The record gives the reactivity of an RNA of 177 nucleotides to 2A3 and DMS. For DMS, 2,032 sequencing reads were counted. For DMS the reverse transcriptase was MarathonRT. The RNA was probed in 150 mM KOAc, 10 mM MgCl2 and 150 mM bicine (pH 8.5) at 24 C.
RNA sequence: GGGAACGACUCGAGUAGAGUCGAAAAUUACUAGUCUGUGAUGAAUUGCUUUGACUUCUGACACCUCGUAUGAAAACUGCACGUGCAGUCUGAUUAUUUUGCAAGACUGAGGCUUAAAAUAAAUCAAGAAACCACUCUAAUUCGUUAGAGUGGUUUCAAAAGAAACAACAACAACAAC
Reactivity to 2A3 in 0.01 (KOAc 150mM, MgCl2 10mM, bicine 150mM(pH8.5), 24C), signal-to-noise 2, nucleotides 027 to 126: u090u020a030c000u000a010g010u010c020u030g170u050g030a090u010g000a020a150u080u050g010c030u130u090u150g040a090c010u000u030c000u070g000a030c020a050c050c000u050c050g000u060a050u100g130a080a010a060a070c030u040g010c040a030c150g130u200g020c000a000g000u000c010u010g010a010u000u100a060u060u220u080u150g000c020a000a110g030a040c030u040g030a030g050g030c000u060u120a000a100a020a090u170a050a040a020u110c040a000a070
Reactivity to DMS in 0.01 (KOAc 150mM, MgCl2 10mM, bicine 150mM(pH8.5), 24C), signal-to-noise 3, nucleotides 027 to 126: u030u010a100c060u000a030g000u000c020u010g000u000g000a070u010g010a080a080u000u010g010c030u000u000u010g010a060c070u000u000c040u000g010a090c110a070c060c020u040c100g000u000a060u000g000a170a050a070a060c050u000g000c010a120c260g030u010g000c000a030g000u010c040u000g000a070u000u000a090u010u000u000u010g000c050a050a070g010a080c080u020g000a070g000g010c040u000u000a040a060a040a050u000a030a060a070u010c080a060a200